[RMDB]
RNA sequence: GGGAACGACUCGAGUAGAGUCGAAAAGUCGGCCGCGCGUUCGGUGCCCAGUUGCGACAACACCUCGGCCUGAUCCAGUUCGGGCAGCUCCUGCAGGACGUCGGCCAAGCGCUUGUCGUGGAGCGCCACCCGAAAAGGGAUUCGUCCCUUUUCGGGUAAAAGAAACAACAACAACAAC
Reactivity to DMS in 0.01 (KOAc 150mM, MgCl2 10mM, bicine 150mM(pH8.5), 24C), signal-to-noise 3, nucleotides 027 to 126: g000u000c070g020g000c020c020g030c240g000c040g000u010u000c050g000g030u000g030c000c010c020a200g010u020u020g000c060g010a060c090a080a140c080a080c060c020u000c100g010g000c010c010u020g000a050u000c070c190a100g010u000u000c070g000g000g000c020a110g030c080u000c050c030u000g020c060a120g000g020a030c020g000u000c040g000g000c040c030a080a100g000c020g000c040u000u000g010u000c140g020u000g010g000a030g010c010g020c030c160
Reactivity to 2A3 in 0.01 (KOAc 150mM, MgCl2 10mM, bicine 150mM(pH8.5), 24C), signal-to-noise 2, nucleotides 027 to 126: g050u020c020g030g030c000c000g100c020g030c030g060u070u050c030g010g050u050g030c020c000c000a070g070u150u180g070c090g060a020c010a080a010c010a020c020c020u030c040g050g020c000c030u060g010a040u030c110c060a060g030u060u030c020g000g090g000c020a040g030c050u130c090c020u110g020c020a000g020g030a060c010g010u050c000g020g020c000c000a010a000g000c020g000c060u030u050g070u110c100g040u110g030g020a010g000c000g000c000c020